This 177-nucleotide RNA was probed chemically with DMS and 2A3. The DMS profile rests on 2,430 reads. Reactivities are given for positions 27 through 126. The reactions ran in a buffer of 150 mM KOAc, 10 mM MgCl2 and 150 mM bicine (pH 8.5), at 24 C. DMS adducts were read by reverse transcription with MarathonRT.

RNA sequence: GGGAACGACUCGAGUAGAGUCGAAAAGAAAAGAAGGGGAGUCCCCGAUCGAAUGUCCAUAGGCAGAGAAACCUCUGGAGUCCUCUAGACCGCAAGGAGGAAAUUACCAGCAGGGGGUGAUCCACCCGAUAUACUUCUUGUUCGCAAGAAGUAUAUCAAAAGAAACAACAACAACAAC
Reactivity to DMS in 0.01 (KOAc 150mM, MgCl2 10mM, bicine 150mM(pH8.5), 24C), signal-to-noise 4, nucleotides 027 to 126: g000a130a060a120a130g010a130a110g010g010g010g010a280g010u000c020c000c000c040g000a100u000c080g010a090a100u010g000u000c010c090a060u010a050g010g010c060a090g000a200g000a110a110a180c050c050u010c010u000g000g000a120g000u000c000c020u010c040u000a090g010a140c160c090g020c140a080a140g000g000a020g000g000a010a060a050u010u010a090c060c020a040g010c140a080g010g000g010g000g020u000g010a140u000c050c060a090c060c030c030
Reactivity to 2A3 in 0.01 (KOAc 150mM, MgCl2 10mM, bicine 150mM(pH8.5), 24C), signal-to-noise 2, nucleotides 027 to 126: g020a000a100a010a020g040a090a080g000g010g020g010a030g040u030c000c010c000c000g010a010u060c030g020a070a050u070g020u020c040c030a070u090a070g030g000c040a010g040a010g050a170a110a050c000c000u000c020u010g000g000a010g020u010c010c010u000c020u030a070g050a180c070c080g060c180a070a110g020g000a010g000g000a020a060a020u110u040a090c010c000a000g000c030a020g070g050g000g000g020u030g010a030u040c020c010a020c000c030c000